[RMDB]
RNA sequence: GGGAACGACUCGAGUAGAGUCGAAAACCACGCAAGGCAGAUAGGGGAGAUAGUGCUUCUCUUAUGAGAAGGGCGUCGUGAACACAGUUAAGUGGCUCGUCUGUAGCUCCCGGAGGUGAGUACACCUAUUGUACCUUGGAUUCGUCCAAGGUACAAUAAAAGAAACAACAACAACAAC
Reactivity to 2A3 in 0.01 (KOAc 150mM, MgCl2 10mM, bicine 150mM(pH8.5), 24C), signal-to-noise 7, nucleotides 027 to 126: c010c010a030c000g080c020a030a120g080g030c020a030g050a120u160a170g010g070g020g000a040g020a030u110a120g090u080g100c000u020u000c010u010c000u140u240a170u300g010a010g000a010a020g020g010g000c020g020u020c010g070u100g070a090a010c030a000c000a070g090u180u220a250a010g020u040g030g000c000u000c020g070u000c020u030g080u030a030g060c010u030c030c010c020g060g020a020g000g030u040g010a080g050u050a070c010a010c010c000u000
Reactivity to DMS in 0.01 (KOAc 150mM, MgCl2 10mM, bicine 150mM(pH8.5), 24C), signal-to-noise 5, nucleotides 027 to 126: c020c000a140c170g010c070a080a070g010g000c060a040g000a100u020a060g010g010g000g000a080g020a050u010a040g030u010g000c030u000u000c010u010c010u010u040a100u020g000a060g010a050a030g010g010g030c050g010u000c020g000u000g000a110a140c080a070c070a110g010u020u010a110a110g020u010g020g010c010u000c040g000u000c020u000g010u000a080g000c040u000c000c010c020g020g000a040g010g030u000g000a140g020u020a100c050a040c030c050u010